[RMDB]
RNA sequence: GGGAACGACUCGAGUAGAGUCGAAAAGUGCCUGAAUGCCAUUCUCCAAGAGGUGAGACGUUCCUCCGCAGGAAAGCACGGAGCUGCAGGAGAUCUUGUGAUGAGCUGUGUCUCCCGUGGCCGAAAGCUCACAAAACAAGUUCGCUUGUUUUGUGAGAAAAGAAACAACAACAACAAC
Reactivity to DMS in 0.01 (KOAc 150mM, MgCl2 10mM, bicine 150mM(pH8.5), 24C), signal-to-noise 5, nucleotides 027 to 126: g010u000g010c010c020u010g010a130a100u010g010c030c070a120u000u010c030u000c040c060a120a130g000a090g000g020u000g000a040g010a140c060g010u000u000c010c000u010c060c050g030c080a070g010g010a070a080a090g010c040a050c050g020g000a060g020c010u000g010c050a030g010g000a070g000a020u000c060u010u000g010u000g000a120u000g000a200g010c060u020g000u000g010u000c000u000c010c020c030g060u000g010g030c010c020g000a070a080a070g010
Reactivity to 2A3 in 0.01 (KOAc 150mM, MgCl2 10mM, bicine 150mM(pH8.5), 24C), signal-to-noise 3, nucleotides 027 to 126: g050u040g040c010c020u040g140a070a020u100g030c030c020a100u090u020c050u000c010c030a110a060g060a040g180g070u150g030a020g010a010c020g020u020u000c000c000u020c010c000g000c020a030g070g000a120a080a010g060c030a010c060g040g020a050g000c010u010g010c010a010g030g010a100g000a040u030c030u090u130g040u060g060a130u060g000a010g030c020u010g020u050g020u100c010u000c000c010c000g020u020g000g020c010c000g010a050a030a010g010
Source: RMDB library OK2TST, as collected in RNAgym. An RNA of 177 nucleotides, treated with DMS and 2A3 and read out base by base. For 2A3, 6,176 sequencing reads were counted. DMS adducts were read by reverse transcription with MarathonRT.